RNA sequence: GGGAACGACUCGAGUAGAGUCGAAAACUCAGUUCUCUCUAUUCUUUCUUUUUGAAAGAGGAGACUGCUGGACCAAACGCCCGAACCGGGAUGAGCCGCAUGCCGGGCGGGAGGGACGAGGUCGGGGAUAGAGGACACUUCGGUGUCCUCAAAAGAAACAACAACAACAAC
Reactivity to 2A3 in 0.01 (KOAc 150mM, MgCl2 10mM, bicine 150mM(pH8.5), 24C), signal-to-noise 4, nucleotides 027 to 129: c020u000c000a010g000u160u000c020u000c000u000c000u040a180u210u030c020u080u000u010c030u020u300u150u100u300g020a000a000a010g010a000g020g000a010g010a020c010u020g010c020u030g030g010a010c060c000a070a090a020c080g010c010c010c000g010a110a040c000c010g000g000g060a050u090g020a030g100c000c040g050c070a020u050g100c000c000g010g020g010c050g010g000g000a110g000g000g000a020c070g060a040g010g030u060c070g040g040g000g000a020u050a130
Reactivity to DMS in 0.01 (KOAc 150mM, MgCl2 10mM, bicine 150mM(pH8.5), 24C), signal-to-noise 3, nucleotides 027 to 129: c160u050c000a030g060u050u020c230u010c000u030c070u040a130u030u000c000u020u070u050c050u020u020u050u130u130g000a000a000a000g000a050g080g000a070g000a010c110u010g020c030u070g000g020a160c010c070a040a190a120c090g010c020c000c010g020a080a140c090c000g000g000g000a060u020g030a240g140c060c110g040c070a070u030g020c070c010g000g000g120c060g010g000g080a150g000g040g000a130c110g040a100g000g020u020c060g100g000g030g040a080u090a020